[RMDB]
An RNA of 177 nucleotides, treated with 2A3 and DMS and read out base by base. For DMS, 2,828 sequencing reads were counted. It was measured as part of the RMDB library M2PK50. Values cover nucleotides 27 to 126. The reactions ran in a buffer of 150 mM KOAc, 10 mM MgCl2 and 150 mM bicine (pH 8.5), at 24 C.
RNA sequence: GGGAACGACUCGAGUAGAGUCGAAAACAUACGGACUUCGGUCCGUAUGAAAGAACCUCAAAUUGACGCAAACUUCCGCGUCAUCGCGACGAAGCGAGGAAAAAAUCGAGGUGUUCGCACCUCGAAACGUAAUUCCACAGUUCGCUGUGGAAUUACGAAAAGAAACAACAACAACAAC
Reactivity to 2A3 in 0.01 (KOAc 150mM, MgCl2 10mM, bicine 150mM(pH8.5), 24C), signal-to-noise 4, nucleotides 027 to 126: c000a000u000a010c000g000g000a000c000u020u080c220g060g000u000c000c000g000u000a000u000g010a000a000a010g040a030a030c000c000u040c060a070a090a070u130u090g000a010c010g010c030a050a130a250c170u270u070c110c080g000c000g010u010c000a000u000c010g030c030g090a170c100g100a070a030g020c040g000a030g030g090a100a100a000a000a000a020u050c010g000a010g000g000u010g010u010u050c180g030c040a000c010c000u000c000g020a010a000a000
Reactivity to DMS in 0.01 (KOAc 150mM, MgCl2 10mM, bicine 150mM(pH8.5), 24C), signal-to-noise 4, nucleotides 027 to 126: c000a010u000a000c000g010g000a030c020u000u020c180g050g020u000c000c000g010u000a000u000g010a020a110a120g020a130a150c010c000u000c130a060a100a060u000u000g000a020c000g010c000a100a130a140c200u000u000c200c090g030c000g000u000c000a040u010c090g030c010g000a120c210g000a120a160g000c060g020a080g020g010a010a010a090a090a120a120u000c000g020a010g000g030u000g010u000u020c140g030c020a020c000c000u000c000g010a000a010a060